[RMDB]
RNA sequence: GGGAACGACUCGAGUAGAGUCGAAAAGAUAUGGAGUGAUAUCUCAGCGACGCUAUGAAGUAUGUAACAAGUGGUCGGAAACGACCACCGCCCAUAUGGAGCGUCCCUGAGAUAUCACUCCUAAGUCCAAUAGAGGUCUGUUCGCAGACCUCUAUUGAAAAGAAACAACAACAACAAC
Reactivity to DMS in 0.01 (KOAc 150mM, MgCl2 10mM, bicine 150mM(pH8.5), 24C), signal-to-noise 4, nucleotides 027 to 126: g010a120u010a300u010g020g010a040g020u000g010a020u000a010u010c000u000c010a010g020c300g000a020c000g030c010u000a230u000g010a130a210g000u000a000u020g010u000a070a120c240a260a120g010u010g000g000u010c000g000g000a120a090a200c000g000a000c000c000a010c010c050g010c300c170c000a030u010a010u000g000g000a020g040c010g010u000c000c110c000u010g020a030g000a000u000a000u000c000a010c000u000c000c000u000a000a090g000u010c030
This 177-nucleotide RNA was probed chemically with DMS. DMS adducts were read by reverse transcription with MarathonRT. Reactivities are given for positions 27 through 126.